[RMDB]
RNA sequence: GGGAACGACUCGAGUAGAGUCGAAAAGUUGGCCCCGAUGGAGUUUCCGAUGAGCACCGGUGAGAAGAAACUGUCUCGCAGAAUAGAAGUCUCUUCUUGUUUGCUUUGAGACUUCUUCUCCACAGGGACUCUAGUAAAGCUUCGGCUUUACUAGAGUAAAAGAAACAACAACAACAAC
Reactivity to DMS in 0.01 (KOAc 150mM, MgCl2 10mM, bicine 150mM(pH8.5), 24C), signal-to-noise 2, nucleotides 027 to 126: g010u000u010g000g010c030c010c010c000g020a070u000g010g010a210g000u010u010u000c010c020g040a170u000g010a140g000c070a080c060c020g000g010u010g020a050g010a040a050g000a040a100a130c190u010g020u000c000u000c040g020c040a050g010a030a030u000a020g000a020a010g000u030c110u000c010u000u000c010u000u000g000u000u000u000g010c030u000u000u020g010a030g000a020c020u000u000c010u000u000c000u010c050c100a070c070a080g000g000g000